This 177-nucleotide RNA was probed chemically with 2A3 and DMS. For 2A3 the reverse transcriptase was SuperScript II with manganese. Values cover nucleotides 27 to 126. Source: RMDB library TTRDES, as collected in RNAgym. The reactions ran in a buffer of 150 mM KOAc, 10 mM MgCl2 and 150 mM bicine (pH 8.5), at 24 C.
RNA sequence: GGGAACGACUCGAGUAGAGUCGAAAAGAUAUGGACGGACUUCAGCUUUUGACGAGGUGGUCUCGGAAACGAGACCCACCUCGAUAAGCUGAGUCCGUCCUAAGUCAAAGCCUCGUUCGCGAGGCAACGAGGGUUGUAAGUUCGCUUACAACCCUCGAAAAGAAACAACAACAACAAC
Reactivity to 2A3 in 0.01 (KOAc 150mM, MgCl2 10mM, bicine 150mM(pH8.5), 24C), signal-to-noise 2, nucleotides 027 to 126: g020a010u100a050u190g000g000a000c010g020g000a010c050u300u110c300a000g020c010u240u180u230u290g300a170c040g000a000g000g020u010g000g000u020c000u030c010g050g020a100a100a030c020g020a000g010a020c050c000c000a010c000c000u000c000g010a000u000a000a000g040c010u000g020a000g000u010c000c000g000u000c000c000u000a000a000g010u010c000a070a000a030g000c000c010u000c000g000u070u110c160g020c010g110a010g000g000c000a000a010
Reactivity to DMS in 0.01 (KOAc 150mM, MgCl2 10mM, bicine 150mM(pH8.5), 24C), signal-to-noise 2, nucleotides 027 to 126: g010a020u000a300u000g010g000a030c000g000g010a050c000u000u040c000a030g000c000u000u000u000u000g000a230c170g010a010g030g020u020g010g000u000c020u000c010g000g000a080a140a180c000g020a020g010a040c170c080c010a010c000c000u000c000g010a020u000a010a010g000c010u010g000a140g000u000c000c000g010u000c000c000u000a000a070g010u000c000a130a110a160g000c000c000u000c000g010u000u000c250g040c000g020a020g000g000c040a010a030